Source information:
The record gives the reactivity of an RNA of 207 nucleotides to 2A3 and DMS. For DMS the reverse transcriptase was MarathonRT. For 2A3 the reverse transcriptase was SuperScript II with manganese. For 2A3, 2,654 sequencing reads were counted. For DMS, 4,354 sequencing reads were counted. The reactions ran in a buffer of 150 mM KOAc, 10 mM MgCl2 and 150 mM bicine (pH 8.5), at 24 C.
RNA sequence: GGGAACGACUCGAGUAGAGUCGAAAAGCAAUCCGCAGCCAAGCUCCUACGGGCUGUCAAAGCCUAUGGAGAAGGUUCAGAGACUAAAUGGCAGUGGGCAAGCAUGGCAAUGCUUGCUUAAGAUAUAGUCCGUCCCAGCUGAGAAGCUGCCUAUGAGGAAUGAUCAAAUCUUCGGAUUUGAUCAUUCAAAAGAAACAACAACAACAAC
Reactivity to 2A3 in 0.01 (KOAc 150mM, MgCl2 10mM, bicine 150mM(pH8.5), 24C), signal-to-noise 3, nucleotides 027 to 156: g030c030a040a110u070c060c060g000c070a000g010c020c000a140a100g020c000u010c010c000u000a040c140g030g010g000c010u020g070u160c100a120a090a000g000c000c000u100a100u250g010g000a010g010a010a020g000g000u030u050c020a030g100a010g010a080c030u090a040a030a170u080g010g010c010a000g020u030g020g000g000c010a000a000g000c000a010u050g180g000c130a180a090u000g010c000u000u010g020c000u010u020a010a010g010a000u050a010u030a140g020u000c020c060g030u020c010c000c000a010g030c050u070g070a050g040a170a000g010c000u010g000c000c000u100a180u080g100a050g120
Reactivity to DMS in 0.01 (KOAc 150mM, MgCl2 10mM, bicine 150mM(pH8.5), 24C), signal-to-noise 3, nucleotides 027 to 156: g010c080a130a140u010c040c020g030c100a110g040c030c050a160a150g020c020u000c010c000u060a090c110g000g020g060c020u000g040u010c160a130a130a100g030c000c000u000a090u010g030g010a020g010a050a180g010g000u000u030c040a050g010a070g010a230c030u000a050a100a130u000g010g040c030a040g040u000g010g000g010c010a000a010g010c000a020u000g020g020c300a100a190u000g010c010u010u010g010c000u000u000a020a100g000a120u000a110u000a070g020u000c040c010g010u000c000c000c000a140g020c020u010g010a210g010a120a130g020c010u000g010c010c010u000a100u010g030a250g030